[RMDB]
The record gives the reactivity of an RNA of 177 nucleotides to DMS. DMS (dimethyl sulfate) methylates the pairing face of unpaired adenines and cytosines. The data come from the RNA Mapping Database (RMDB), library OK1LIB. Reactivities are given for positions 27 through 126. The DMS profile rests on 828 reads.
RNA sequence: GGGAACGACUCGAGUAGAGUCGAAAAGAAGAAAGAAAAACCGGAAAGAAAACGGUAAGACGCAACAGACCACAAAAAGAAGAGAAAGUGUGGCUGAAAGAAACCGAACCGGUAAUUCCGUAAGAAAAUAUACGCACCCAUUCGUGGGUGCGUAUAUAAAAGAAACAACAACAACAAC
Reactivity to DMS in 0.01 (KOAc 150mM, MgCl2 10mM, bicine 150mM(pH8.5), 24C), signal-to-noise 1, nucleotides 027 to 126: g000a210a070g010a060a100a080g010a130a020a190a230a020c100c000g030g000a180a030a220g010a040a160a170a130c000g020g000u000a000a150g000a020c240g000c270a030a140c000a000g000a080c000c000a000c070a000a020a020a260a000g000a190a070g020a110g030a070a030a300g000u000g000u000g000g000c010u010g010a000a000a140g060a120a010a030c000c000g000a070a030c000c040g000g000u000a000a210u020u000c000c000g010u040a010a070g010a080a000a110